[RMDB]
RNA sequence: GGGAACGACUCGAGUAGAGUCGAAAACAGCUCCAUACUAACGUAAGAAGUCAGUGUGGCGUUUUCACGAGCGGAAAUUGUCACUGUUCCAAAAAACAAUUGCUAGUCUCCUGUGAGCUAAUGAUCAUAUUGAAGGCCUAUUCGUAGGCCUUCAAUAAAAAGAAACAACAACAACAAC
Reactivity to DMS in 0.01 (KOAc 150mM, MgCl2 10mM, bicine 150mM(pH8.5), 24C), signal-to-noise 4, nucleotides 027 to 126: c080a060g000c080u000c000c010a020u000a020c010u010a050a030c030g000u010a180a120g000a150a170g000u000c010a020g000u010g020u010g000g010c120g010u000u010u000u020c050a080c120g000a070g020c090g000g000a010a040a060u000u020g000u010c050a140c070u010g010u000u000c080c060a000a060a070a090a090a020c060a040a030u000u000g020c030u000a070g010u020c030u000c030c110u010g020u010g010a040g000c070u030a070a040u060g000a040u020c160a090
Reactivity to 2A3 in 0.01 (KOAc 150mM, MgCl2 10mM, bicine 150mM(pH8.5), 24C), signal-to-noise 3, nucleotides 027 to 126: c030a000g010c020u010c010c000a010u000a020c000u010a010a070c030g140u060a050a110g150a120a010g170u030c030a000g000u000g000u000g040g000c020g010u000u010u040u020c030a040c040g040a020g010c030g050g070a030a010a020u090u060g030u070c040a010c040u010g060u070u090c000c000a110a040a000a030a000a000c050a010a040u040u050g020c020u030a050g050u040c010u040c030c060u100g020u060g040a010g070c020u080a130a000u140g070a060u180c040a040

Chemical mapping of a 177-nucleotide RNA with DMS and 2A3. Reactivities are rounded to 0.1 and cut off at 0 and 3. For 2A3, 2,291 sequencing reads were counted. The reactions ran in a buffer of 150 mM KOAc, 10 mM MgCl2 and 150 mM bicine (pH 8.5), at 24 C. Reactivities are given for positions 27 through 126.